[RMDB]
An RNA of 177 nucleotides, treated with 2A3 and DMS and read out base by base. The reactions ran in a buffer of 150 mM KOAc, 10 mM MgCl2 and 150 mM bicine (pH 8.5), at 24 C. It was measured as part of the RMDB library M2PK90.
RNA sequence: GGGAACGACUCGAGUAGAGUCGAAAAAGAAAGAGAGCGUAGCACACACUCAGACUAAGUCUGACACACACCUACGCUACAUGUGUGUGUGAAGUCGAGAUAUCGACAAGUGUGUGUGAUGAAAAAAUCGCUCAAUUACGUUCGCGUAAUUGAGCGAAAAAGAAACAACAACAACAAC
Reactivity to 2A3 in 0.01 (KOAc 150mM, MgCl2 10mM, bicine 150mM(pH8.5), 24C), signal-to-noise 2, nucleotides 027 to 126: a010g100a060a070a000g150a030g000a000g040c050g000u000a010g000c000a000c000a000c000a000c010u000c010a000g020a000c060u100a090a090g020u000c000u000g030a020c000a000c000a000c000a000c000c030u090a010c050g050c010u080a030c050a050u030g080u030g000u010g000u030g000u000g080a040a060g000u020c010g010a020g000a180u260a060u140c020g000a000c020a020a010g000u000g000u000g000u000g000u000g020a020u090g120a050a040a000a000a000a050
Reactivity to DMS in 0.01 (KOAc 150mM, MgCl2 10mM, bicine 150mM(pH8.5), 24C), signal-to-noise 2, nucleotides 027 to 126: a000g020a060a030a090g010a110g000a080g060c000g020u010a160g010c000a000c000a000c010a010c000u000c000a000g010a030c020u010a070a120g030u000c000u010g020a220c000a000c000a010c000a010c010c010u000a040c070g060c040u030a030c220a030u000g000u000g010u010g030u020g000u000g010a060a230g000u000c000g000a060g030a200u020a160u010c010g000a000c000a090a070g000u000g010u000g020u000g000u000g000a080u000g000a000a030a100a020a080a110